RNA sequence: GGGAACGACUCGAGUAGAGUCGAAAAUCUGGUGUGUCAUCCUUUAGUGAACUACUUUUUGAUUGCGUUGAUCUUUCAGUAGCUUCUACCUAUUUUUUAGUCCGCAUCUUGCAAGAUAAGACUGGCGCACUAACCGCAGGUUCGCCUGCGGUUAGUGAAAAGAAACAACAACAACAAC
Reactivity to DMS in 0.01 (KOAc 150mM, MgCl2 10mM, bicine 150mM(pH8.5), 24C), signal-to-noise 1, nucleotides 027 to 126: u000c070u000g010g010u000g020u000g000u000c030a060u020c110c060u010u000u020a070g010u010g010a070a070c020u000a010c020u000u010u000u000u000g000a090u010u000g020c200g050u020u020g010a050u000c020u000u000u000c040a030g020u010a040g000c180u000u000c030u010a070c150c060u000a010u000u000u000u000u000u000a100g010u010c020c040g020c090a070u010c030u000u000g000c120a060a070g030a110u010a110a060g020a040c080u010g020g000c130g040
Reactivity to 2A3 in 0.01 (KOAc 150mM, MgCl2 10mM, bicine 150mM(pH8.5), 24C), signal-to-noise 1, nucleotides 027 to 126: u020c040u000g060g010u060g030u020g000u010c000a030u090c010c020u100u050u080a080g050u070g080a050a030c000u030a060c000u030u110u000u040u000g030a020u050u080g140c140g060u040u100g030a070u030c010u000u020u020c000a000g010u040a020g040c030u000u010c000u010a040c000c000u040a130u080u130u000u030u000u050a020g030u040c010c010g000c050a010u030c030u040u070g060c070a090a110g010a210u040a040a000g010a030c030u040g020g000c030g010
Overview
Chemical mapping of a 177-nucleotide RNA with DMS and 2A3. 2A3 adducts were read by reverse transcription with SuperScript II with manganese. Conditions: 150 mM KOAc, 10 mM MgCl2 and 150 mM bicine (pH 8.5), 24 C. The data come from the RNA Mapping Database (RMDB), library 15KREP.